Chemical mapping of a 207-nucleotide RNA with 2A3 and DMS. The 2A3 profile rests on 6,895 reads. Values are in units of 0.01, from 0 to 300, in steps of 10. Source: RMDB library M2RFPK, as collected in RNAgym.
RNA sequence: GGGAACGACUCGAGUAGAGUCGAAAACACAGGAACGUGUGGAAGUCCUGCUCGGGGCGGAAGCAUUAAAACCAUUCGAGCUAGUCAAUGCGUGGCGUGUCUCUCCGCAGCGUGUUGGCGAAUGUAACAAGCUGCCUCUCGUUCGCGAGAGGCAGAACUCUUGAUGUUAGUUCGCUAACAUCAAGAGAAAAGAAACAACAACAACAAC
Reactivity to 2A3 in 0.01 (KOAc 150mM, MgCl2 10mM, bicine 150mM(pH8.5), 24C), signal-to-noise 6, nucleotides 027 to 156: c050a000c010a020g200g150a230a000c080g050u020g000u020g020g040a060a030g020u010c010c010u030g020c030u010c030g010g000g000g000c040g020g020a050a010g060c080a050u110u240a050a050a030a080c050c010a020u090u100c060g020a020g060c040u070a010g020u020c000a000a010u000g000c000g020u030g050g000c020g020u090g090u050c050u010c010u010c150c010g000c010a010g010c000g000u020g000u010u000g000g000c010g000a010a020u090g030u100a040a120c090a130a010g040c000u000g000c000c000u000c000u000c000g020u050u060c170g030c010g100a000g000a000g000g000c000a000g000a000a000
Reactivity to DMS in 0.01 (KOAc 150mM, MgCl2 10mM, bicine 150mM(pH8.5), 24C), signal-to-noise 2, nucleotides 027 to 156: c030a060c040a130g030g020a110a080c120g030u010g020u020g000g030a260a140g000u000c020c000u000g000c010u000c050g000g000g020g010c020g000g020a220a200g000c050a150u000u010a070a020a080a080c010c010a080u000u000c040g030a150g040c040u020a140g000u000c040a030a020u000g020c000g030u010g030g020c050g010u010g000u010c080u000c080u000c220c020g050c030a040g010c020g030u000g020u000u010g020g020c020g010a100a030u000g020u000a090a140c100a050a110g020c010u000g000c010c000u000c000u000c010g010u000u000c290g010c020g020a010g000a040g020g040c000a000g000a010a060